[RMDB]
RNA sequence: GGGAACGACUCGAGUAGAGUCGAAAAUUACUUGUUCUUUAGGUAUAGAACAGUAAAAGCUGUCAGUAUCGCUGUAUAAAAAAUUUUCAACUCCACAACCUUCUAUUAUCAUUGAUUGGAGAUAUACCAUACCAGAAGAUUUCGAUCUUCUGGUAUGAAAAGAAACAACAACAACAAC
Reactivity to DMS in 0.01 (KOAc 150mM, MgCl2 10mM, bicine 150mM(pH8.5), 24C), signal-to-noise 4, nucleotides 027 to 126: u000u000a020c050u000u010g010u010u000c000u000u010u000a120g010g010u010a080u010a040g010a040a010c000a020g000u000a020a060a120a160g010c050u000g000u010c050a110g020u000a060u000c080g010c090u000g000u010a080u020a010a030a090a090a070a110u010u000u010u000c060a060a120c030u000c010c010a040c090a070a060c070c050u000u000c100u010a070u000u000a060u010c090a100u010u010g010a110u000u010g020g020a020g000a100u010a050u010a060c180
Reactivity to 2A3 in 0.01 (KOAc 150mM, MgCl2 10mM, bicine 150mM(pH8.5), 24C), signal-to-noise 4, nucleotides 027 to 126: u040u010a010c020u090u150g000u000u030c020u060u080u120a120g060g050u140a130u020a100g020a030a000c010a000g000u010a000a070a030a050g040c030u050g070u150c040a020g000u030a080u130c040g000c040u060g140u130a050u290a080a080a030a040a050a070u100u070u060u160c030a050a030c000u000c010c010a050c010a080a090c040c000u110u090c070u150a270u260u130a110u180c050a070u080u110g070a070u060u050g040g000a020g010a010u040a000u030a110c030

Chemical mapping of a 177-nucleotide RNA with DMS and 2A3. The 2A3 profile rests on 2,953 reads. The RNA was probed in 150 mM KOAc, 10 mM MgCl2 and 150 mM bicine (pH 8.5) at 24 C. Source: RMDB library OK2TST, as collected in RNAgym. DMS adducts were read by reverse transcription with MarathonRT.